[RMDB]
RNA sequence: GGGAACGACUCGAGUAGAGUCGAAAACAUUGAAUCUAUAAAUUACCUUGGGCAGUAUGGCCAUUUUCACGAUAUUGAUUCUUCCUACCCAUGAGCAUGGAAUGUUCUUCCAUUUGUUUGUAUCCUCUUUAAUUUCCUUGAGCAGUGAUUUGUAGUAUAAAUUAGCAGCAUUCGUGCUGCUAAUUUAAAAAGAAACAACAACAACAAC
Reactivity to DMS in 0.01 (KOAc 150mM, MgCl2 10mM, bicine 150mM(pH8.5), 24C), signal-to-noise 2, nucleotides 027 to 156: c050a100u010u010g020a040a150u000c010u040a140u010a070a050a090u000u000a050c020c020u010u000g020g040g000c010a080g040u020a030u010g000g010c030c050a090u000u010u000u020c060a140c100g020a110u010a090u000u000g000a130u010u000c050u000u000c050c010u000a140c020c000c050a080u010g000a060g030c040a060u020g000g000a080a160u000g020u010u000c070u000u000c030c020a110u000u000u000g010u000u000u000g010u010a110u000c020c030u000c040u010u010u010a070a120u020u000u000c010c020u000u010g030a110g010c010a100g020u000g020a080u010u000u000g010u010a080g000u000a200
Reactivity to 2A3 in 0.01 (KOAc 150mM, MgCl2 10mM, bicine 150mM(pH8.5), 24C), signal-to-noise 2, nucleotides 027 to 156: c040a050u150u220g030a050a000u050c070u070a070u070a190a090a080u120u040a060c030c000u060u060g010g000g020c010a010g050u160a070u130g060g030c020c030a050u110u050u080u090c100a060c050g080a080u040a030u140u100g030a060u060u000c000u030u030c000c020u000a070c020c000c050a060u040g050a000g020c060a010u030g020g020a040a030u130g040u000u090c000u020u050c030c010a030u030u040u080g070u000u010u040g070u060a060u090c010c010u000c040u070u100u070a120a130u050u120u090c040c030u040u050g020a010g040c050a010g000u010g030a020u090u090u150g050u020a030g050u010a020